Chemical mapping of a 170-nucleotide RNA with 2A3 and DMS. Source: RMDB library 15KLIB, as collected in RNAgym. High DMS reactivity at an A or C suggests that its Watson-Crick edge is free. The reactions ran in a buffer of 150 mM KOAc, 10 mM MgCl2 and 150 mM bicine (pH 8.5), at 24 C.
RNA sequence: GGGAACGACUCGAGUAGAGUCGAAAACCAGGACCCCCUUCCAAAAAGACUGAGGGGGGUGGCUAGGACGCAGGGGACCAGUGGAGCCGUGGGAUGCUCUUCCCAAUCUGACCUGACCCCUCCCCCAUACGACGUAAGUUCGCUUACGUCAAAAGAAACAACAACAACAAC
Reactivity to 2A3 in 0.01 (KOAc 150mM, MgCl2 10mM, bicine 150mM(pH8.5), 24C), signal-to-noise 9, nucleotides 027 to 129: c000c000a000g020g070a010c010c010c010c000c010u010u010c040c020a100a110a050a070a070g150a120c200u140g000a040g000g000g000g000g000g000u010g000g010c020u030a100g080g040a060c110g030c140a030g020g020g000g030a110c090c020a040g020u090g090g060a020g040c030c040g050u090g020g030g000a030u100g080c060u060c020u170u030c010c010c010a010a040u050c030u050g100a110c000c000u020g060a080c000c000c000c000u010c000c000c000c000c000a050u090a100c110
Reactivity to DMS in 0.01 (KOAc 150mM, MgCl2 10mM, bicine 150mM(pH8.5), 24C), signal-to-noise 9, nucleotides 027 to 129: c040c010a060g020g040a050c010c010c010c010c030u000u020c020c200a100a100a090a140a050g040a130c200u020g000a000g010g000g000g000g000g000u020g000g000c020u000a080g030g020a100c210g030c060a010g010g010g010g010a140c090c040a060g030u050g020g000a030g000c000c010g000u030g000g020g020a050u050g040c130u050c120u010u000c010c000c000a030a050u030c020u000g040a110c040c020u000g000a130c010c010c010c010u000c000c000c000c000c010a100u030a050c170
Overview:
DMS adducts were read by reverse transcription with MarathonRT. For 2A3, 136,331 sequencing reads were counted. For 2A3 the reverse transcriptase was SuperScript II with manganese.